Source: RMDB library M2RFPK, as collected in RNAgym. The record gives the reactivity of an RNA of 207 nucleotides to 2A3 and DMS. For 2A3, 843 sequencing reads were counted.
RNA sequence: GGGAACGACUCGAGUAGAGUCGAAAACUGCAUCUGUGGAGGACGAAGCAUAUUUCUGUUUCUGGAGGAUUAUUUAUUAUCUGCCGGAAAGUCUUGCAGGUGGCUGGGAUAUGUUCAGUCUGGUAGAAAAAUCAGGAGUCCUUCGGGACUCCUGAAACUACUUAACAAACUUCGGUUUGUUAAGUAGAAAAGAAACAACAACAACAAC
Reactivity to 2A3 in 0.01 (KOAc 150mM, MgCl2 10mM, bicine 150mM(pH8.5), 24C), signal-to-noise 1, nucleotides 027 to 156: c040u090g030c010a010u000c010u010g010u060g070g010a220g110g010a010c010g020a010a000g000c000a010u000a010u060u060u010c100u150g200u060u030u000c000u010g000g010a060g010g000a010u010u090a040u040u300u070a090u080u020a000u030c010u030g150c020c010g040g000a040a020a020g000u000c010u030u040g000c000a000g060g000u010g030g000c030u090g030g000g020a010u000a000u030g010u020u020c010a010g040u000c010u020g040g020u110a080g100a090a080a010a010a060u040c010a000g000g000a010g000u000c000c040u070u090c220g040g000g010a000c000u010c010c000u000g000a000a000a000
Reactivity to DMS in 0.01 (KOAc 150mM, MgCl2 10mM, bicine 150mM(pH8.5), 24C), signal-to-noise 1, nucleotides 027 to 156: c030u000g000c000a040u000c030u020g040u000g010g010a180g020g000a040c010g010a120a100g020c000a040u000a010u000u000u000c000u000g030u000u000u010c000u000g010g000a060g010g000a040u000u000a070u000u000u010a080u070u000a050u000c010u000g000c000c010g040g030a020a110a070g020u000c030u030u000g010c010a030g020g020u000g000g020c000u000g020g000g010a050u000a010u010g010u000u000c030a300g010u000c020u010g000g020u010a090g000a090a120a110a100a200u000c000a010g030g020a040g010u000c010c010u000u000c260g120g050g000a010c000u000c010c010u000g000a000a020a100